[RMDB]
RNA sequence: GGGAACGACUCGAGUAGAGUCGAAAAUAACAACGUCGUCUUGAGCGUCCGUGCGGAGGGUCAAGCAGGCUGUGCUAUUGAGCUCCGAAAUCACCACUCUCGCGUGCCGACCAUGUCCUGACAAGGGACCAAGACGGCAUUUCGAUGCCGUCUUGGUAAAAGAAACAACAACAACAAC
Reactivity to DMS in 0.01 (KOAc 150mM, MgCl2 10mM, bicine 150mM(pH8.5), 24C), signal-to-noise 2, nucleotides 027 to 126: u040a080a130c190a020a100c090g000u020c000g020u040c000u010u000g010a070g030c030g000u000c010c060g020u010g010c140g000g000a030g000g020g000u000c070a090a090g010c040a050g010g000c110u000g050u000g020c030u000a090u000u000g010a170g000c010u000c000c010g000a090a090a040u010c100a020c080c030a130c060u000c060u020c030g020c070g030u000g040c060c050g010a020c020c030a090u010g020u020c000c000u000g000a100c220a060a080g000g000g020
Reactivity to 2A3 in 0.01 (KOAc 150mM, MgCl2 10mM, bicine 150mM(pH8.5), 24C), signal-to-noise 2, nucleotides 027 to 126: u150a010a030c090a000a020c010g070u040c020g000u010c040u030u070g030a090g030c130g040u050c050c000g100u120g030c140g030g060a030g020g040g060u070c040a000a010g010c000a000g130g000c020u080g040u020g060c000u050a070u120u140g090a030g010c020u000c050c040g080a070a080a010u160c030a020c030c000a070c040u000c000u020c000g030c000g010u000g000c000c010g000a050c050c000a020u140g050u010c010c000u010g030a080c040a050a030g010g040g010